Chemical mapping of a 177-nucleotide RNA with 2A3 and DMS.
Source: RMDB library TTRDEL, as collected in RNAgym.
The reactions ran in a buffer of 150 mM KOAc, 10 mM MgCl2 and 150 mM bicine (pH 8.5), at 24 C.
For 2A3 the reverse transcriptase was SuperScript II with manganese.
Reactivities are rounded to 0.1 and cut off at 0 and 3.
The 2A3 profile rests on 58,432 reads.

RNA sequence: GGGAACGACUCGAGUAGAGUCGAAAAGAUAUGGAUCAAGAGCGAUAAGAUGGGUAUCGGAAACGAUAUUAUCUUUUGACGCUUGUAGUCCUAAGUCAAAACCUGGUGUAGUUCGCUACACCAGGAAGAUACUGUAAGUGUUCGCACUUACAGUAUCAAAAGAAACAACAACAACAAC
Reactivity to 2A3 in 0.01 (KOAc 150mM, MgCl2 10mM, bicine 150mM(pH8.5), 24C), signal-to-noise 9, nucleotides 027 to 126: g020a010u060a020u120g010g000a010u090c070a130a020g000a000g020c030g070a090u060a230a020g020a010u070g220g030g030u020a000u000c000g020g020a060a030a020c010g000a010u010a010u020u020a020u010c000u040u130u120u190g230a110c040g000c000u030u080g030u060a010g000u000c000c000u010a090a020g040u020c030a020a030a090a190c000c000u010g000g000u000g000u000a030g010u030u090c300g010c170u000a000c000a000c010c000a000g000g000a000a000
Reactivity to DMS in 0.01 (KOAc 150mM, MgCl2 10mM, bicine 150mM(pH8.5), 24C), signal-to-noise 9, nucleotides 027 to 126: g010a030u000a300u000g000g000a010u000c020a300a280g000a000g010c010g020a150u000a010a010g010a010u000g010g010g020u000a010u000c000g010g000a080a050a110c010g000a010u000a000u000u000a020u000c000u000u000u000u000g010a140c050g010c000u000u000g000u010a280g000u000c000c000u000a050a160g010u000c030a080a070a070a150c000c000u000g000g010u000g010u000a010g010u000u010c260g010c000u000a000c000a000c000c000a000g000g000a010a020